[RMDB]
RNA sequence: GGGAACGACUCGAGUAGAGUCGAAAAGAUAUGGAGGCAGGACAUGCUUGACAGUCGGAAACGACUGGAGAGCAACAGCCUGGCUCCUAAGUCAAAACGUUAAGGACCCUUCGGGGUCCUUAACGAACACUAUGUGAAUCUUCGGAUUCACAUAGUGAAAAGAAACAACAACAACAAC
Reactivity to DMS in 0.01 (KOAc 150mM, MgCl2 10mM, bicine 150mM(pH8.5), 24C), signal-to-noise 6, nucleotides 027 to 126: g000a050u010a300u010g020g000a010g010g010c000a010g000g010a040c070a180u000g000c010u000u010g000a300c000a000g000u000c000g010g010a100a100a200c010g010a000c000u000g000g000a300g000a000g000c000a020a040c260a090g000c000c000u000g000g000c010u000c000c000u000a000a040g000u010c030a040a040a090a170c020g000u000u000a000a000g000g000a010c010c000c000u000u000c210g030g000g010g000u000c000c000u000u000a000a000c000g000a050a100
Reactivity to 2A3 in 0.01 (KOAc 150mM, MgCl2 10mM, bicine 150mM(pH8.5), 24C), signal-to-noise 2, nucleotides 027 to 126: g020a020u070a050u130g000g000a000g030g100c000a000g000g020a090c040a150u120g000c000u000u020g010a010c000a000g000u010c010g020g000a100a070a030c000g020a000c000u010g020g000a030g000a000g010c020a010a010c020a020g040c010c000u060g030g080c000u000c000c000u010a090a010g050u030c020a000a030a100a160c000g000u000u000a000a000g000g000a000c000c030c000u020u080c300g010g000g010g000u000c010c000u000u000a000a000c000g000a000a000